[RMDB]
Background
The record gives the reactivity of an RNA of 207 nucleotides to 2A3 and DMS. For DMS, 4,697 sequencing reads were counted. It was measured as part of the RMDB library OK3TST. Reactivities are given for positions 27 through 156.

RNA sequence: GGGAACGACUCGAGUAGAGUCGAAAAUAGACCAGUUAUAGUUAACCUGUUUUGUCGAUCAAUAACUUCUCUACCUGAACAGUGACUUUGGCCAAUCAUUUUUCUCAACCAUUGAGGUUAGAAUGUUCACGAUAUGAUCCACAUGCCAUUGAUAAUACAUGCAAAAUUACUUCGGUAAUUUUGCAUGAAAAGAAACAACAACAACAAC
Reactivity to 2A3 in 0.01 (KOAc 150mM, MgCl2 10mM, bicine 150mM(pH8.5), 24C), signal-to-noise 4, nucleotides 027 to 156: u150a020g030a060c040c010a030g020u040u070a130u050a120g040u040u090a080a070c020c020u060g070u060u090u060u040g050u070c030g070a060u090c030a090a110u070a070a060c030u070u010c010u000c010u070a070c040c050u040g020a060a030c010a110g010u020g080a040c000u050u040u050g030g000c030c030a060a070u030c020a060u040u070u010u160u060c020u010c030a030a060c020c010a050u000u220g050a040g010g010u010u010a010g020a030a040u070g040u070u100c060a030c070g020a030u050a070u150g030a040u020c020c010a010c010a080u090g020c030c010a030u040u080g040a020u120a150a040u180a100
Reactivity to DMS in 0.01 (KOAc 150mM, MgCl2 10mM, bicine 150mM(pH8.5), 24C), signal-to-noise 2, nucleotides 027 to 156: u000a070g040a150c030c030a130g010u020u000a060u000a100g010u000u000a060a060c040c120u000g010u000u010u000u000g030u010c040g010a070u010c040a100a070u010a050a060c060u000u000c010u000c010u000a070c030c020u020g010a090a100c040a060g040u000g020a050c040u000u000u010g020g020c070c070a090a110u030c050a080u000u000u000u000u000c030u010c030a070a060c020c020a230u010u010g020a160g000g010u000u010a100g010a040a040u010g020u000u000c060a070c060g000a090u000a080u010g000a050u000c020c020a050c040a120u010g020c060c010a100u000u000g020a110u000a060a110u000a190